Chemical mapping of a 207-nucleotide RNA with 2A3. The reactions ran in a buffer of 150 mM KOAc, 10 mM MgCl2 and 150 mM bicine (pH 8.5), at 24 C.
[RMDB]
RNA sequence: GGGAACGACUCGAGUAGAGUCGAAAAUGCCGGCGCUUGGUGAGACGGGGUGGCAAUGGCUUUGCACUUGGUGUGUUUUAGGGGGACUGUGUCCUGCUUGCUGGGCGCCCCGAGGCUAUUGUUUCCAUCACGGCUUUCGCCUGCUUCUGAUUUAGAACUACUGAGGAUACUUCGGUAUCCUCAGUAGAAAAGAAACAACAACAACAAC
Reactivity to 2A3 in 0.01 (KOAc 150mM, MgCl2 10mM, bicine 150mM(pH8.5), 24C), signal-to-noise 1, nucleotides 027 to 156: u190g060c040c020g000g020c020g030c050u070u170g150g000u070g100a060g000a100c020g000g000g020g020u040g010g010c000a000a000u010g020g000c000u050u040u080g030c070a030c020u130u180g180g000u090g060u020g050u140u170u150u280a110g000g000g000g000g050a030c090u190g050u010g050u190c000c020u020g120c140u050u170g000c070u020g030g000g020c000g000c020c000c030c030g000a020g030g000c010u080a000u000u000g050u030u150u060c000c020a020u030c040a000c010g000g060c010u100u060u080c020g020c000c000u060g010c080u050u040c010u030g130a180u080u070u230a080g020a150a000